About this RNA: Conditions: 150 mM KOAc, 10 mM MgCl2 and 150 mM bicine (pH 8.5), 24 C. Chemical mapping of a 177-nucleotide RNA with 2A3 and DMS. The DMS profile rests on 1,543 reads. It was measured as part of the RMDB library OK2TST.

RNA sequence: GGGAACGACUCGAGUAGAGUCGAAAAUGCCACGGUGCUUAUUGGAUUAGUCUUACGCUUUAAUGCCUCUACCCUUAGCUACACGCUCUUGAUUGCAUUAGGCAUUGCCUUGGGAUUUCUCUCCUGCCGCUUACUUGGUGUUCGCACCAAGUAAGCGAAAAGAAACAACAACAACAAC
Reactivity to 2A3 in 0.01 (KOAc 150mM, MgCl2 10mM, bicine 150mM(pH8.5), 24C), signal-to-noise 2, nucleotides 027 to 126: u050g030c010c000a020c060g010g010u100g000c020u070u070a070u120u230g100g000a060u080u100a050g050u000c010u070u100a030c060g040c030u110u070u140a100a040u180g030c000c010u010c030u060a100c020c000c000u060u050a020g030c010u030a040c040a010c120g040c000u030c010u060u090g090a150u030u110g030c020a050u000u110a040g000g000c030a030u000u120g010c020c000u000u030g010g000g060a040u010u050u070c030u000c000u030c000c000u020g060c060
Reactivity to DMS in 0.01 (KOAc 150mM, MgCl2 10mM, bicine 150mM(pH8.5), 24C), signal-to-noise 2, nucleotides 027 to 126: u010g000c000c020a080c090g000g030u010g030c020u000u000a080u010u010g010g020a160u020u020a110g010u000c070u000u010a100c130g010c010u000u010u010a100a060u010g020c030c090u020c050u010a100c050c020c030u000u000a070g010c030u000a100c170a070c140g000c040u000c050u010u000g000a090u000u020g010c070a060u010u000a040g010g010c030a080u000u000g000c000c020u000u010g020g000g000a100u000u000u000c020u000c070u000c030c030u010g000c120